[RMDB]
RNA sequence: GGGAACGACUCGAGUAGAGUCGAAAAUGCCAAAUUGCGGGAAGUCCCUAAAGAUUCAACUACUAAGCAGCUUGUGGAAACACAGUUGUGGCCGAGUUAAUAGCCCUGGGUAUAGUAACAAUGUUGAAUAUGACUCUUAAUUGAGGAAAUGGGUGAUGUUGUAAAUGUACUUCGGUACAUUUACAACAAAAGAAACAACAACAACAAC
Reactivity to 2A3 in 0.01 (KOAc 150mM, MgCl2 10mM, bicine 150mM(pH8.5), 24C), signal-to-noise 2, nucleotides 027 to 156: u180g030c010c010a050a050a100u170u150g020c080g000g030g040a050a020g070u040c000c010c020u060a060a060a030g030a010u020u000c010a000a000c010u050a000c020u080a060a010g000c010a000g000c050u290u300g010u030g020g020a040a040a020c020a000c000a000g010u010u010g000u040g000g000c010c000g060a010g040u040u080a060a040u060a060g060c030c030c060u160g020g010g000u180a270u030a300g020u000a030a030c040a070a020u010g010u020u030g000a000a000u000a020u030g050a010c000u050c020u030u080a140a110u300u070g000a000g020g070a000a040a040u090g010g000g000u080g030a080u030
Reactivity to DMS in 0.01 (KOAc 150mM, MgCl2 10mM, bicine 150mM(pH8.5), 24C), signal-to-noise 2, nucleotides 027 to 156: u000g000c000c000a080a200a140u000u000g000c000g030g040g000a130a150g010u000c020c000c030u010a060a040a100g010a130u010u010c010a020a020c010u000a080c040u000a210a300g010c000a030g010c020u030u000g070u010g010g000a200a090a210c040a030c010a030g000u000u000g000u000g020g000c000c000g010a020g040u000u010a080a090u000a120g010c000c000c000u010g080g030g040u000a040u000a020g010u000a090a060c060a010a030u010g000u000u010g010a030a050u010a060u000g010a260c000u000c000u000u000a090a200u000u010g030a020g000g000a060a050a090u010g040g010g040u010g010a180u010